Source information:
Chemical mapping of a 177-nucleotide RNA with DMS and 2A3. It was measured as part of the RMDB library OK2TST. For 2A3 the reverse transcriptase was SuperScript II with manganese.
RNA sequence: GGGAACGACUCGAGUAGAGUCGAAAAGGCAGCGUGGCACGACAACGUGACCGCGUUUUCUCUCCGGGGCGGGAGAGAGCCGGAUAUCGCCGCCCUGGGGGCAACGACCACCCCCGUCAACUCAGUGAUAGACUUGUAGAUUCGUCUACAAGUCUAUAAAAGAAACAACAACAACAAC
Reactivity to DMS in 0.01 (KOAc 150mM, MgCl2 10mM, bicine 150mM(pH8.5), 24C), signal-to-noise 8, nucleotides 027 to 126: g000g010c040a190g010c010g020u010g000g010c000a020c000g010a170c300a130a150c020g020u000g000a160c000c000g010c010g000u000u000u010u000c040u000c010u000c010c030g000g000g000g010c020g010g010g000a050g010a050g010a060g010c030c020g000g010a130u010a070u000c070g010c000c000g000c000c000c010u000g000g000g000g010g000c130a050a040c070g000a120c040c080a280c010c010c000c010c020g010u010c130a060a080c110u010c090a110g010u010g010
Reactivity to 2A3 in 0.01 (KOAc 150mM, MgCl2 10mM, bicine 150mM(pH8.5), 24C), signal-to-noise 2, nucleotides 027 to 126: g010g000c000a000g000c020g000u020g000g000c000a010c020g080a070c030a300a110c090g010u010g060a270c000c010g000c000g000u010u000u010u020c010u000c000u000c000c000g010g030g000g000c030g000g000g000a070g000a000g010a000g000c010c000g000g000a050u070a040u130c100g000c040c000g000c010c000c020u000g010g000g000g000g000c040a120a040c030g070a030c000c040a070c020c010c000c010c000g040u070c030a090a120c060u100c290a050g040u050g150